[RMDB]
RNA sequence: GGGAACGACUCGAGUAGAGUCGAAAAGUAAAGAAGAAAACGUGCGCAAGAAAAGAAUGGUGGUAUAAACUGCCGAGAAUAAGUAAUGGACGGCAGAGCGCACGAACCACCAAAGAACAGAAAAAAACAUAAUAGCGGAGUUCGCUCCGCUAUUAUGAAAAGAAACAACAACAACAAC
Reactivity to 2A3 in 0.01 (KOAc 150mM, MgCl2 10mM, bicine 150mM(pH8.5), 24C), signal-to-noise 1, nucleotides 027 to 126: g050u060a040a110a220g050a030a100g050a000a160a000a020c020g010u030g020c030g010c040a050a010g100a230a260a020a000g060a030a020u020g060g040u030g010g030u020a010u050a130a080a000c000u020g010c000c000g050a040g120a030a100u250a130a000g200u140a000a140u140g170g070a010c000g000g000c000a000g000a010g010c000g000c010a000c010g000a000a020c010c010a000c000c000a010a010a010g070a080a020c050a000g100a020a180a030a000a000a000a000
Reactivity to DMS in 0.01 (KOAc 150mM, MgCl2 10mM, bicine 150mM(pH8.5), 24C), signal-to-noise 1, nucleotides 027 to 126: g000u010a030a070a100g010a130a200g000a130a140a080a140c020g000u020g020c010g010c000a060a190g010a050a030a050a040g000a070a090u020g030g000u000g010g000u020a090u000a070a010a050c000u000g010c010c000g040a070g020a100a130u000a110a090g020u000a080a040u010g010g000a070c030g000g000c020a010g010a030g000c020g000c000a020c070g000a000a050c000c000a000c000c000a010a070a110g030a100a070c090a110g020a000a000a060a060a080a060a110
An RNA of 177 nucleotides, treated with 2A3 and DMS and read out base by base. The RNA was probed in 150 mM KOAc, 10 mM MgCl2 and 150 mM bicine (pH 8.5) at 24 C. High 2A3 reactivity points to a flexible backbone, as in loops and unpaired stretches.